[RMDB]
This 207-nucleotide RNA was probed chemically with 2A3. 2A3 adducts were read by reverse transcription with SuperScript II with manganese. It was measured as part of the RMDB library OK3TST. For 2A3, 388 sequencing reads were counted. High 2A3 reactivity points to a flexible backbone, as in loops and unpaired stretches. The RNA was probed in 150 mM KOAc, 10 mM MgCl2 and 150 mM bicine (pH 8.5) at 24 C.
RNA sequence: GGGAACGACUCGAGUAGAGUCGAAAAAACACAUAUCCAUUAUCGUAAUACACACUACGCAUACCAUUCGCCUUAUAUGGUUGCAUAAAUAACAUUUUUAGUGUAUUAUUAGGGCUAUAAUAGGCGCAUUCAGUUAUCCACCAACCAAUUUUGCGAGAACCACAGGGAUGUUCGCAUCCCUGUGGUUAAAAGAAACAACAACAACAAC
Reactivity to 2A3 in 0.01 (KOAc 150mM, MgCl2 10mM, bicine 150mM(pH8.5), 24C), signal-to-noise 1, nucleotides 027 to 156: a000a000c170a010c000a030u300a080u020c010c010a020u140u130a070u060c080g010u020a000a100u010a040c000a000c030a010c100u160a010c060g100c010a060u040a240c000c000a020u020u090c000g080c010c020u030u080a120u000a020u150g040g000u000u010g000c000a030u140a090a050a000u030a040a000c030a030u040u090u000u040u290a050g000u000g010u000a050u080u000a050u060u060a020g000g020g060c020u090a050u040a270a000u130a080g010g020c030g000c030a030u010u080c000a020g050u000u020a010u000c020c000a050c120c080a100a000c000c030a100a090u020u080u050u100g000c030g000a020g040